[RMDB]
RNA sequence: GGGAACGACUCGAGUAGAGUCGAAAAAUCGAUCGUGAUUUUGAACAUUAUAGGAAGGCGAAUCUGUACCGGGCGGCGCUGAUGCUCAGCCUAAAAGAUGCGAUCAGCCGAGAUAAACGGCGAAUGGAUACCCAGCAAACUUCGGUUUGCUGGGUAUAAAAGAAACAACAACAACAAC
Reactivity to DMS in 0.01 (KOAc 150mM, MgCl2 10mM, bicine 150mM(pH8.5), 24C), signal-to-noise 3, nucleotides 027 to 126: a020u030c010g000a070u000c150g000u000g010a050u000u010u040u000g000a150a100c100a080u040u040a120u030a120g010g010a050a080g000g020c040g000a070a040u000c010u020g040u010a080c020c040g000g000g010c040g020g010c030g000c060u020g010a070u010g000c020u000c070a130g010c000c010u000a010a040a080a060g030a090u000g000c020g010a040u010c030a190g010c000c000g010a050g000a100u020a050a080a050c040g010g010c000g000a080a050u080g000g010
Reactivity to 2A3 in 0.01 (KOAc 150mM, MgCl2 10mM, bicine 150mM(pH8.5), 24C), signal-to-noise 3, nucleotides 027 to 126: a000u100c070g000a010u000c050g020u180g170a120u000u010u000u060g040a060a010c030a060u080u190a230u250a090g090g000a140a010g000g000c020g050a000a020u010c030u160g050u030a090c010c020g030g020g060c020g000g040c000g100c080u150g030a050u090g000c040u070c070a000g000c000c010u020a020a030a000a020g070a010u110g000c000g000a020u000c040a050g000c000c020g080a080g010a100u290a140a180a000c000g020g020c020g040a090a000u110g140g040
Structure probing data (DMS and 2A3) for a 177-nucleotide construct. 2A3 adducts were read by reverse transcription with SuperScript II with manganese. Values are in units of 0.01, from 0 to 300, in steps of 10. For 2A3, 1,193 sequencing reads were counted. The reactions ran in a buffer of 150 mM KOAc, 10 mM MgCl2 and 150 mM bicine (pH 8.5), at 24 C.